[RMDB]
RNA sequence: GGGAACGACUCGAGUAGAGUCGAAAAGUUGAUGCGCAAGGGAACGUCUCUGAAGAGCCUGAAGAAGACAAGCCUGAAGUCGUCAUCGACCAUGAAAAACUAGCAUCAUGGCUCGCCAAUCGCGCUGCUCUGCACUCUCAUUCGUGAGAGUGCAGAGAAAAGAAACAACAACAACAAC
Reactivity to 2A3 in 0.01 (KOAc 150mM, MgCl2 10mM, bicine 150mM(pH8.5), 24C), signal-to-noise 2, nucleotides 027 to 126: g010u000u050g000a020u030g000c030g010c060a050a010g000g000g020a040a040c070g020u000c000u000c000u030g120a140a110g040a100g200c030c070u040g010a040a050g020a060a010g020a000c020a020a050g070c010c010u020g040a140a070g040u140c030g060u110c020a030u040c030g000a010c020c030a070u060g060a100a140a060a020a030c100u080a050g050c020a020u040c000a030u070g020g000c020u000c020g000c050c010a020a020u080c060g000c000g030c060u060g000
Reactivity to DMS in 0.01 (KOAc 150mM, MgCl2 10mM, bicine 150mM(pH8.5), 24C), signal-to-noise 2, nucleotides 027 to 126: g010u020u000g020a040u010g010c000g030c050a170a300g000g000g000a190a150c230g000u000c000u000c000u020g000a260a210g010a090g050c100c040u000g000a170a020g000a050a030g010a060c060a130a200g010c020c000u000g020a150a110g000u010c010g040u000c040a050u000c010g000a060c000c000a030u000g010a030a040a050a120a090c230u000a060g000c050a090u000c040a050u000g010g010c020u000c030g010c060c100a100a090u000c170g000c080g000c030u010g000

The data come from the RNA Mapping Database (RMDB), library OK2TST. The record gives the reactivity of an RNA of 177 nucleotides to 2A3 and DMS. For 2A3, 1,552 sequencing reads were counted. 2A3 adducts were read by reverse transcription with SuperScript II with manganese. Reactivities are given for positions 27 through 126. The reactions ran in a buffer of 150 mM KOAc, 10 mM MgCl2 and 150 mM bicine (pH 8.5), at 24 C. The DMS profile rests on 1,179 reads.